[RMDB]
RNA sequence: GGGAACGACUCGAGUAGAGUCGAAAAACUUCUACUCUGAGUGAACGCGGCAACUGAUAAACGCAACCGACACGGAUGCAACGGUGACCGACGCCGAGAUCGAGGCCUUCUUUGCUGAAGAGGCUGCCGCUCUCGUCUGAAGGAACCAGCCUGGCUCGUUUUACGUAUUGUUCGCAAUACGUAAAACAAAAGAAACAACAACAACAAC
Reactivity to 2A3 in 0.01 (KOAc 150mM, MgCl2 10mM, bicine 150mM(pH8.5), 24C), signal-to-noise 7, nucleotides 027 to 156: a000c060u250u080c000u020a000c000u000c070u170g010a010g000u040g030a090a020c060g000c020g040g010c050a090a040c070u140g060a130u200a200a130a010c080g000c030a040a110c020c000g090a100c080a040c190g030g020a050u060g000c010a060a070c080g000g000u020g040a120c000c010g030a030c040g020c020c010g000a000g000a010u020c010g000a030g000g020c020c000u220u130c030u070u110u150g170c160u230g030a030a010g010a000g010g010c000u060g190c210c010g000c010u000c000u010c000g040u000c040u040g020a040a020g000g000a000a000c010c000a000g000c000c010u030g030g000c020u030c070
Reactivity to DMS in 0.01 (KOAc 150mM, MgCl2 10mM, bicine 150mM(pH8.5), 24C), signal-to-noise 2, nucleotides 027 to 156: a030c010u000u020c000u000a020c000u000c000u000g030a000g000u000g010a110a080c040g000c020g020g030c000a080a210c030u010g020a120u010a040a080a080c040g000c030a120a090c040c030g020a160c020a300c090g000g000a060u000g040c070a090a090c040g000g020u030g010a130c010c000g000a300c160g030c180c010g000a030g030a050u010c010g020a300g000g000c010c000u000u000c050u010u000u010g110c180u000g020a090a020g010a040g000g020c010u000g000c100c030g030c090u000c000u000c010g030u010c060u030g020a090a040g000g000a250a070c030c000a090g010c000c020u000g000g040c010u000c050